RNA sequence: GGGAACGACUCGAGUAGAGUCGAAAAGCCGCAUUCUCGGCAAUUAUCGCAGGAUGCCGCAAGUCAUGGAUGAAGCGCGCGAUAUUCUCCAUAUGCUCGGGCUGUUGCCGCUCGCGCAAUUGCGCGACUCAGUAUCCUCGUUCGCGAGGAUACUGAGAAAAGAAACAACAACAACAAC
Reactivity to DMS in 0.01 (KOAc 150mM, MgCl2 10mM, bicine 150mM(pH8.5), 24C), signal-to-noise 3, nucleotides 027 to 126: g020c010c150g010c070a050u000u000c030u000c060g040g010c090a120a060u000u000a080u000c080g020c140a010g000g000a030u000g010c030c170g010c040a100a100g040u000c140a030u010g000g010a070u010g010a050a110g020c060g030c040g010c090g000a050u000a070u000u010c050u000c000c030a060u000a150u000g000c020u000c020g010g000g000c030u000g010u010u000g010c010c020g030c210u010c000g000c040g010c010a290a090u000u000g020c000g020c000g000a060
Reactivity to 2A3 in 0.01 (KOAc 150mM, MgCl2 10mM, bicine 150mM(pH8.5), 24C), signal-to-noise 3, nucleotides 027 to 126: g020c000c010g000c030a060u020u010c030u030c040g040g000c000a010a090u290u110a200u170c090g000c070a020g000g040a030u030g010c010c030g000c020a050a020g100u090c060a060u080g050g010a040u120g050a100a030g040c040g010c010g040c040g140a060u040a110u160u030c020u000c030c010a050u080a040u140g000c010u010c010g020g010g000c000u020g040u060u050g090c000c010g010c030u010c000g000c000g030c030a120a300u230u210g000c010g000c000g030a050
An RNA of 177 nucleotides, treated with DMS and 2A3 and read out base by base.
Values are in units of 0.01, from 0 to 300, in steps of 10.
It was measured as part of the RMDB library OK2TST.